[RMDB]
RNA sequence: GGGAACGACUCGAGUAGAGUCGAAAAGGAGGAGUUCUAAAUAGAUCCUGUUCCUUUCCCGACGCCGACUAGGCGUAUAAUACAUUACAGGAUCUAGGAUGGGAAGGGAGGUCCUCUGGAACUCAGAACGGACGAUCAUGUUCGCAUGAUCGUCCGUAAAAGAAACAACAACAACAAC
Reactivity to DMS in 0.01 (KOAc 150mM, MgCl2 10mM, bicine 150mM(pH8.5), 24C), signal-to-noise 1, nucleotides 027 to 126: g010g030a170g000g000a060g000u000u000c030u010a040a080a160u000a010g010a000u010c000c000u010g040u000u000c160c050u000u000u000c020c000c000g020a060c120g010c010c000g010a160c300u000a160g010g010c000g040u000a000u020a010a080u000a160c180a040u030u010a040c010a000g000g010a000u000c000u000a040g000g010a210u010g000g020g000a130a100g010g020g010a090g000g010u000c040c010u010c060u000g010g000a130a010c050u010c070a160g000a140
Reactivity to 2A3 in 0.01 (KOAc 150mM, MgCl2 10mM, bicine 150mM(pH8.5), 24C), signal-to-noise 1, nucleotides 027 to 126: g030g010a010g030g020a040g070u000u080c030u030a000a060a060u030a020g000a020u000c000c000u000g040u050u030c030c000u040u050u020c010c000c010g010a020c000g030c000c010g090a300c180u090a030g000g000c000g000u000a000u010a000a000u030a000c050a030u170u060a020c010a000g010g000a000u000c000u000a010g040g010a030u110g000g010g040a070a040g070g060g040a060g070g030u010c000c020u000c000u020g040g040a070a050c000u010c050a010g090a080

The data come from the RNA Mapping Database (RMDB), library OK2TRN.
This 177-nucleotide RNA was probed chemically with DMS and 2A3.
Conditions: 150 mM KOAc, 10 mM MgCl2 and 150 mM bicine (pH 8.5), 24 C.